[RMDB]
RNA sequence: GGGAACGACUCGAGUAGAGUCGAAAACCGCUUUUUCUCUAUCUUGCUGCUACCGGGGCGAGGGUGUUUAGCCCUUGGAACCGCAGUUGGUUCCUCGGAACUAAACUCGUGGUUCCUGUGGUUCACACCUGACCUCCUGUGCAGAAAAGAAAAAAGAGCAUAUUUGCAAGUUCGCUUGCAAAUAUGCAAAAGAAACAACAACAACAAC
Reactivity to 2A3 in 0.01 (KOAc 150mM, MgCl2 10mM, bicine 150mM(pH8.5), 24C), signal-to-noise 3, nucleotides 027 to 156: c020c000g050c040u110u050u020u060u010c100u000c040u080a190u130c040u070u130g040c000u020g000c020u130a010c010c030g000g000g020g000c010g010a020g030g020g010u020g020u020u080u180a030g000c000c000c000u020u050g000g010a000a010c010c000g000c010a010g000u010u010g020g010u010u000c000c020u070c240g080g010a000a010c000u100a200a070a080c020u080c190g020u010g000g000u000u010c000c010u000g040u170g000g000u030u050c050a000c000a000c000c010u020g010a020c000c000u000c010c000u000g000u000g000c000a000g000a020a300a000a000g000a000a040a010a000a010a000g050a000